[RMDB]
RNA sequence: GGGAACGACUCGAGUAGAGUCGAAAAUGGAUCGGGUUGGCGCCGUCGACGCGGGGGCGUCUGGGAGUGCGGCGGAUUCUGGCUGGGCCGAUUUCCUGCCGCGGGUGGUCUCCGCCGCCGGGGCCGCCGUACCUCGGGAUUUCGAUCCCGAGGUACGAAAAGAAACAACAACAACAAC
Reactivity to 2A3 in 0.01 (KOAc 150mM, MgCl2 10mM, bicine 150mM(pH8.5), 24C), signal-to-noise 2, nucleotides 027 to 126: u160g090g030a070u080c140g080g020g020u190u200g090g000c180g090c080c020g020u030c000g030a140c130g010c020g010g000g000g000g010c030g040u000c040u040g060g060g070a170g110u300g010c010g010g000c010g000g010a040u040u040c060u200g010g000c070u210g050g170g060c030c000g020a050u160u050u040c010c000u100g010c000c000g030c030g020g000g010u090g020g040u010c000u020c010c000g000c040c000g010c020c000g000g000g030g000c000c010g010c000